Annotation
This 177-nucleotide RNA was probed chemically with DMS.
[RMDB]
RNA sequence: GGGAACGACUCGAGUAGAGUCGAAAAGAUAUGGAUUUCAUGUGCUAUGCUGGAAUCUUGACCACGUCACGGCCUCGGAAACGAGGUUGAUAUCAAAGACCAGCAUAGCACAUGAAAUCCUAAGUCACAAUUGGGAAAUGUUCGCAUUUCCCAAUUGAAAAGAAACAACAACAACAAC
Reactivity to DMS in 0.01 (KOAc 150mM, MgCl2 10mM, bicine 150mM(pH8.5), 24C), signal-to-noise 4, nucleotides 027 to 126: g030a040u010a300u010g000g020a010u010u000u000c000a010u000g020u000g000c010u000a000u000g010c020u000g000g000a060a120u000c020u000u000g000a080c300c230a190c290g010u000c110a140c300g000g010c000c000u000c010g000g010a130a060a300c000g020a010g010g010u010u000g010a070u000a120u010c070a050a050a070g010a140c010c000a030g000c000a000u000a000g000c000a000c010a020u000g000a010a010a010u000c000c010u000a010a050g000u000c030a170